Chemical mapping of a 177-nucleotide RNA with 2A3 and DMS. DMS (dimethyl sulfate) methylates the pairing face of unpaired adenines and cytosines. Source: RMDB library OK2TRN, as collected in RNAgym. Reactivities are given for positions 27 through 126.

[RMDB]
RNA sequence: GGGAACGACUCGAGUAGAGUCGAAAACUCAAUGCCCUUGUGCCGGCCGGCGCUGUCACGUUCAACGAGGGCGGCACGCGUGACCCGUUCCGCUUGCUUGGACCCCGGGACAUUGACAAACAGAACACUCUCCUUGCGUAUUCGUACGCAAGGAGAGAAAAGAAACAACAACAACAAC
Reactivity to 2A3 in 0.01 (KOAc 150mM, MgCl2 10mM, bicine 150mM(pH8.5), 24C), signal-to-noise 1, nucleotides 027 to 126: c060u030c000a000a070u080g000c060c000c000u000u070g090u010g000c000c070g130g020c080c070g090g000c060g000c070u050g020u070c020a000c120g080u110u040c060a080a080c150g020a230g000g050g000c000g040g010c050a000c030g000c000g080u150g090a080c060c110c030g060u190u010c010c000g010c020u010u040g000c000u040u020g150g000a210c000c000c000c000g070g000g010a080c060a070u060u050g000a070c100a000a220a000c060a060g120a060a050c040a000
Reactivity to DMS in 0.01 (KOAc 150mM, MgCl2 10mM, bicine 150mM(pH8.5), 24C), signal-to-noise 2, nucleotides 027 to 126: c070u010c030a060a030u000g010c030c040c040u000u010g020u000g020c020c000g000g060c100c100g030g010c160g020c080u020g000u020c070a040c130g020u000u000c100a070a080c080g000a160g040g020g010c000g000g000c030a010c030g000c060g060u020g000a070c100c170c100g000u000u000c030c000g010c000u000u000g000c040u000u010g000g020a130c010c020c030c020g000g030g010a020c030a030u000u000g000a050c180a080a060a080c050a050g020a140a110c300a080